[RMDB]
RNA sequence: GGGAACGACUCGAGUAGAGUCGAAAAUUGCCAAGGUUCUGGCGUGGCUCGGGGUCGCGGGUCGCCGCACGUCCCCAUUCGAACGCGUUCGCUGCCUUUUCCUCCGCAGUUGCCACUGGGUCCUAAAAAGUAUAUGGACCUUCGGGUCCAUAUACUUAAAAGAAACAACAACAACAAC
Reactivity to DMS in 0.01 (KOAc 150mM, MgCl2 10mM, bicine 150mM(pH8.5), 24C), signal-to-noise 2, nucleotides 027 to 126: u060u010g000c030c010a070a120g020g000u010u000c010u020g030g010c000g010u010g000g010c040u010c030g010g010g000g000u000c050g010c050g000g010g010u030c120g000c000c080g040c060a090c110g020u020c000c000c010c050a160u040u010c100g000a120a120c170g000c060g010u010u010c060g000c020u000g020c060c030u010u010u020u020c030c010u010c040c080g020c030a070g010u040u000g000c050c010a130c020u010g010g000g000u000c010c040u000a040a090a090
Reactivity to 2A3 in 0.01 (KOAc 150mM, MgCl2 10mM, bicine 150mM(pH8.5), 24C), signal-to-noise 2, nucleotides 027 to 126: u080u070g050c000c010a000a050g080g000u060u110c050u070g040g020c030g040u040g000g000c030u000c030g040g000g020g050u070c040g010c000g080g000g010u090c050g020c040c000g040c030a030c010g060u110c000c000c010c010a070u070u170c050g030a100a060c000g020c020g090u020u040c050g000c030u040g010c000c000u040u020u020u010c000c000u020c020c000g030c010a060g030u060u080g030c020c000a050c010u060g090g010g060u110c000c000u080a110a090a010